[RMDB]
RNA sequence: GGGAACGACUCGAGUAGAGUCGAAAACGACGAAGGCGCCGCCGUGGCGGCACAGCGAGCCGCUGCCCAGGAGCUGCAACGGGCCAAGGCCGCUGUCGCCUCGGCAGAGGCCGAGGUGGCGGCCAGCCGCGCCCGCCAGACCGCCAGCCUCCAGAACACUAAACAGACUAUUCGUAGUCUGUUUAGUAAAAGAAACAACAACAACAAC
Reactivity to 2A3 in 0.01 (KOAc 150mM, MgCl2 10mM, bicine 150mM(pH8.5), 24C), signal-to-noise 1, nucleotides 027 to 156: c030g070a000c050g070a140a110g040g050c020g000c010c060g000c020c050g080u030g000g030c020g010g050c030a010c050a070g140c070g040a030g020c010c000g000c030u050g000c000c020c020a050g020g020a070g020c010u050g010c050a050a040c040g000g000g000c030c080a140a140g110g000c020c020g020c010u000g010u040c000g000c000c000u000c000g000g020c100a010g050a020g300g020c000c000g000a000g000g000u010g010g000c020g000g020c000c070a000g020c000c000g020c020g000c000c000c000g000c070c010a040g040a060c000c070g000c040c000a040g030c000c000u050c010c000a030g040a160a040c040